RNA sequence: GGGAACGACUCGAGUAGAGUCGAAAAGAGUUACGAAAUAAUGUUAGAAAAGGCUUCCUCGUACACGCACGGAAAAGUGACGUGCGUCGGAAGCUCAAGACGACGCAUGUUACUGGAAUUUAAGAAAGGGUAUUAGAUUCUUCGGAAUCUAAUACCCAAAAGAAACAACAACAACAAC
Reactivity to DMS in 0.01 (KOAc 150mM, MgCl2 10mM, bicine 150mM(pH8.5), 24C), signal-to-noise 2, nucleotides 027 to 126: g050a130g080u050u020a060c110g010a040a100a110u040a070a050u030g000u030u040a100g010a030a060a120a080g000g000c090u000u000c020c000u000c120g000u030a100c160a030c040g000c040a060c040g030g000a010a110a010a010g020u000g020a000c000g090u000g020c000g010u000c010g000g000a030a110g030c100u000c100a000a040g010a150c000g010a000c000g010c000a010u000g000u010u000a010c000u020g000g040a080a050u010u030u040a110a180g020a100a030a070
Reactivity to 2A3 in 0.01 (KOAc 150mM, MgCl2 10mM, bicine 150mM(pH8.5), 24C), signal-to-noise 3, nucleotides 027 to 126: g070a010g040u080u140a070c090g130a050a010a010u170a030a090u110g090u230u090a110g100a120a110a030a000g120g000c000u010u010c000c000u010c000g060u090a030c030a010c200g000c000a010c040g030g010a090a010a000a000g000u000g050a010c000g020u010g000c000g000u010c010g040g030a040a000g050c080u000c020a030a040g110a000c030g000a000c000g010c000a000u030g020u010u000a000c000u030g060g070a120a140u060u140u100a210a100g190a140a060a030